[RMDB]
RNA sequence: GGGAACGACUCGAGUAGAGUCGAAAAGCGCGCCGUGGUGUGGAAUAGUGGUAAUGAAAAUCAUGUUCAUCAGUCCUCUGUGGUGUUUACGGCUAUGACGCUGUGGAUGGCCUCGCCGCCCGAGGUGCGUGGUCGCAAUGUUCGCAUUGCGACCACGAAAAGAAACAACAACAACAAC
Reactivity to 2A3 in 0.01 (KOAc 150mM, MgCl2 10mM, bicine 150mM(pH8.5), 24C), signal-to-noise 1, nucleotides 027 to 126: g020c040g000c010g000c010c020g120u090g090g010u080g020u060g020g080a120a050u010a170g050u060g050g010u040a050a040u070g120a070a000a020a070u160c130a120u160g090u080u020c000a080u040c020a090g190u090c010c010u050c030u040g070u110g030g000u030g020u020u010u040a010c000g000g000c000u050a110u210g050a050c150g000c030u090g000u010g040g000a040u090g090g030c000c010u040c010g040c030c000g040c000c000c000g010a030g180g000u060g000
Reactivity to DMS in 0.01 (KOAc 150mM, MgCl2 10mM, bicine 150mM(pH8.5), 24C), signal-to-noise 1, nucleotides 027 to 126: g020c050g020c010g030c010c020g010u010g040g010u010g020u000g010g000a110a050u000a100g010u000g000g000u000a070a040u010g000a050a090a080a100u020c210a090u000g030u000u000c000a060u010c070a070g000u000c000c010u000c040u000g010u010g010g010u000g000u000u000u000a040c070g000g010c030u000a110u000g040a170c210g030c030u000g010u010g010g020a050u020g000g010c000c010u000c130g010c090c020g050c020c040c020g000a050g020g020u000g010